The record gives the reactivity of an RNA of 177 nucleotides to 2A3 and DMS.
DMS adducts were read by reverse transcription with MarathonRT.
Reactivities are given for positions 27 through 126.
The data come from the RNA Mapping Database (RMDB), library OK2TST.
[RMDB]
RNA sequence: GGGAACGACUCGAGUAGAGUCGAAAACAUCUGAUUGACUUUCCCUCGGGGGGAGAUGCCAGCGGAGCGGCACGACAGCGACCUCGGCUGUCUGCAGACGUUCAAGUGGACUGCCUUCGCACUGCAGUAUAUAUCAUAACUUCGGUUAUGAUAUAUAAAAAGAAACAACAACAACAAC
Reactivity to 2A3 in 0.01 (KOAc 150mM, MgCl2 10mM, bicine 150mM(pH8.5), 24C), signal-to-noise 8, nucleotides 027 to 126: c020a050u060c090u140g120a250u130u100g050a080c020u020u040u010c000c000c000u020c020g010g000g000g000g030g000a030g010a030u130g110c020c010a060g090c050g060g010a020g010c010g010g000c020a010c080g010a010c000a000g010c010g050a180c020c070u080c050g120g000c010u000g000u000c000u000g000c010a050g060a270c020g010u030u030c050a110a060g050u040g030g020a020c000u070g080c010c000u020u020c010g000c030a060c070u110g000c020a020g050
Reactivity to DMS in 0.01 (KOAc 150mM, MgCl2 10mM, bicine 150mM(pH8.5), 24C), signal-to-noise 9, nucleotides 027 to 126: c130a120u000c050u010g010a130u010u000g010a080c080u000u000u000c010c010c010u010c100g010g000g000g000g000g000a050g010a080u000g010c020c030a070g020c160g010g010a050g020c050g010g000c020a050c150g010a030c020a020g010c010g010a120c130c110u000c080g010g010c010u000g000u000c000u000g020c040a090g000a300c070g010u000u000c050a110a120g010u000g010g010a120c020u000g000c030c040u000u000c050g010c180a080c130u010g010c050a070g010